[RMDB]
Structure probing data (DMS and 2A3) for a 177-nucleotide construct. For 2A3, 2,039 sequencing reads were counted. The RNA was probed in 150 mM KOAc, 10 mM MgCl2 and 150 mM bicine (pH 8.5) at 24 C. 2A3 adducts were read by reverse transcription with SuperScript II with manganese.

RNA sequence: GGGAACGACUCGAGUAGAGUCGAAAAAUCAAGGUGUCAGAUGUCGCCAGCUGUGCCCAGCAGUUGUUUGCUGCAGCAGAGGGAGCAAGUAGCUUGCACCAGCACAGUGCAUUGCUGGGCCAGCUGGGAGACACUGUGCCUUCGGGCACAGUGUCUCAAAAGAAACAACAACAACAAC
Reactivity to DMS in 0.01 (KOAc 150mM, MgCl2 10mM, bicine 150mM(pH8.5), 24C), signal-to-noise 1, nucleotides 027 to 126: a090u000c050a070a070g010g010u000g010u000c040a040g010a050u010g020u000c050g000c010c000a030g000c000u000g010u000g030c000c000c000a010g010c000a050g020u000u010g000u010u000u020g040c010u000g000c040a150g020c030a160g000a130g000g000g000a160g020c000a000a000g000u000a110g000c010u010u000g010c000a140c000c010a150g020c020a220c040a030g010u010g020c040a030u010u000g020c000u000g000g010g010c010c000a000g010c000u000g040g000
Reactivity to 2A3 in 0.01 (KOAc 150mM, MgCl2 10mM, bicine 150mM(pH8.5), 24C), signal-to-noise 1, nucleotides 027 to 126: a000u110c040a040a040g100g000u040g050u040c020a020g000a230u040g060u090c030g020c060c000a010g000c020u060g170u300g040c000c000c000a000g000c010a010g020u120u120g050u070u150u210g020c010u030g010c000a150g000c000a020g090a200g190g020g030a180g010c010a010a050g040u170a030g250c010u030u010g000c010a030c000c060a030g030c030a010c000a020g020u020g000c000a010u040u000g000c000u000g000g000g060c000c000a000g000c010u000g000g020